[RMDB]
RNA sequence: GGGAACGACUCGAGUAGAGUCGAAAAACUAAUCCAAAGCAAGUAUAGGAGAACAGAUUUUUAACUAUUUUUAGGCAGAUAAAAAAUAGUAUUUGACAGUCUAACACUAACUGAACAAUAAGUGUUAAAAAGUCGUCUCUGUUCGCAGAGACGACAAGGUGAUCACUUAGUUCGCUAAGUGAUCACCAAAAGAAACAACAACAACAAC
Reactivity to 2A3 in 0.01 (KOAc 150mM, MgCl2 10mM, bicine 150mM(pH8.5), 24C), signal-to-noise 1, nucleotides 027 to 156: a000c050u080a070a000u020c000c010a020a000a010g040c000a000a000g010u030a040u090a120g020g000a020g030a050a040c040a100g070a080u040u000u010u010u040a080a010c000u000a010u010u010u000u000u010a010g080g000c040a030g080a300u150a120a080a000a010a000a000u010a000g000u000a010u000u020u000g030a010c000a000g000u000c000u000a000a000c000a000c000u010a020a000c000u000g020a020a010c000a000a010u000a000a000g000u000g000u000u010a030a020a000a000a010g010u000c000g000u000c000u000c000u000g040u050u010c140g000c010a000g000a010g000a000c000g000a000c000a010a010

Chemical mapping of a 207-nucleotide RNA with 2A3. For 2A3, 1,222 sequencing reads were counted. Source: RMDB library M2RFPK, as collected in RNAgym. As a SHAPE reagent, 2A3 marks flexible, mostly unpaired nucleotides at the ribose 2'-OH. Conditions: 150 mM KOAc, 10 mM MgCl2 and 150 mM bicine (pH 8.5), 24 C. Values cover nucleotides 27 to 156.